Chemical mapping of a 177-nucleotide RNA with DMS and 2A3. It was measured as part of the RMDB library OK2TRN. The DMS profile rests on 997 reads. For DMS the reverse transcriptase was MarathonRT.
[RMDB]
RNA sequence: GGGAACGACUCGAGUAGAGUCGAAAAUCAUUCACACCUGGGAUGACUAAGGCUUACUGCAGCAAAGUGCUAAACCUCAAAUUCCAUAGUGAAUCAGGUCCUUUGCAAAGUAUGGAAUCCAUUGACCCCCUACGUAGCAGUUCGCUGCUACGUAGGGAAAAGAAACAACAACAACAAC
Reactivity to DMS in 0.01 (KOAc 150mM, MgCl2 10mM, bicine 150mM(pH8.5), 24C), signal-to-noise 2, nucleotides 027 to 126: u000c060a070u000u000c000a050c090a160c190c100u000g010g010g000a060u020g010a090c070u020a170a130g000g010c040u000u000a030c050u000g010c070a280g000c030a000a020a040g020u000g050c300u030a020a040a080c020c000u010c070a090a200a170u000u000c000c000a140u020a100g000u020g000a070a010u000c120a020g000g000u000c030c020u000u000u000g000c020a050a100a040g000u040a030u000g000g000a050a070u030c070c010a100u010u000g000a150c100c050
Reactivity to 2A3 in 0.01 (KOAc 150mM, MgCl2 10mM, bicine 150mM(pH8.5), 24C), signal-to-noise 2, nucleotides 027 to 126: u010c000a010u040u020c030a040c030a100c180c050u130g020g010g000a030u040g030a040c030u080a050a090g050g000c000u000u030a010c020u070g030c020a020g000c000a040a000a000g030u080g040c040u190a130a040a050c000c010u010c070a110a100a050u000u040c000c020a220u140a120g250u300g070a010a030u020c010a010g000g000u020c000c000u000u040u000g000c000a000a050a050g000u000a030u080g040g050a070a080u000c030c000a060u010u150g060a080c000c000